[RMDB]
RNA sequence: GGGAACGACUCGAGUAGAGUCGAAAAUGAGGACAGCGCCGCGGGCAGGUCCCCUCGGUGGGUGCAUACAUGGUGCCCAUCGCGGCACCGUGAAUGGAGGUGGCUGAGCCGGAGAGUCAAACGGGACGACACGGCUUACAUUCGUGUAAGCCGUGUCAAAAGAAACAACAACAACAAC
Reactivity to DMS in 0.01 (KOAc 150mM, MgCl2 10mM, bicine 150mM(pH8.5), 24C), signal-to-noise 1, nucleotides 027 to 126: u010g020a090g000g010a060c080a050g030c060g000c050c010g030c120g000g000g000c100a200g020g000u010c050c020c010c010u010c040g000g000u000g030g000g020u000g040c040a100u000a110c050a030u010g000g000u000g000c030c010c000a100u010c270g020c130g000g000c010a020c000c000g010u000g000a090a050u000g000g010a120g030g020u010g010g010c040u000g010a090g050c030c010g000g000a080g010a080g010u000c090a020a050a130c140g000g000g000a080c140